[RMDB]
RNA sequence: GGGAACGACUCGAGUAGAGUCGAAAAAAUAACGCUUAUUUGCAUUCUUAUCAUGCCGGCAGCUCGCCCUUAAAUACUGUUUCCACUACUGCUCCUUUACUGUAAGUUUCCACCGAAAGAUAUUAACCGUGUGGUAGCAGUUCGCUGCUACCACACGAAAAGAAACAACAACAACAAC
Reactivity to 2A3 in 0.01 (KOAc 150mM, MgCl2 10mM, bicine 150mM(pH8.5), 24C), signal-to-noise 1, nucleotides 027 to 126: a000a000u300a070a000c020g040c060u160u040a100u200u120u090g000c040a020u060u060c070u090u160a170u150c000a060u150g060c020c000g000g030c000a090g000c000u000c060g000c000c000c020u070u100a000a000a050u220a010c070u000g000u040u030u000c030c000a030c000u100a060c000u170g000c000u020c000c060u000u000u060a040c000u070g010u070a020a020g000u000u000u000c010c040a010c000c000g140a080a140a000g040a000u160a000u160u150a010a000c000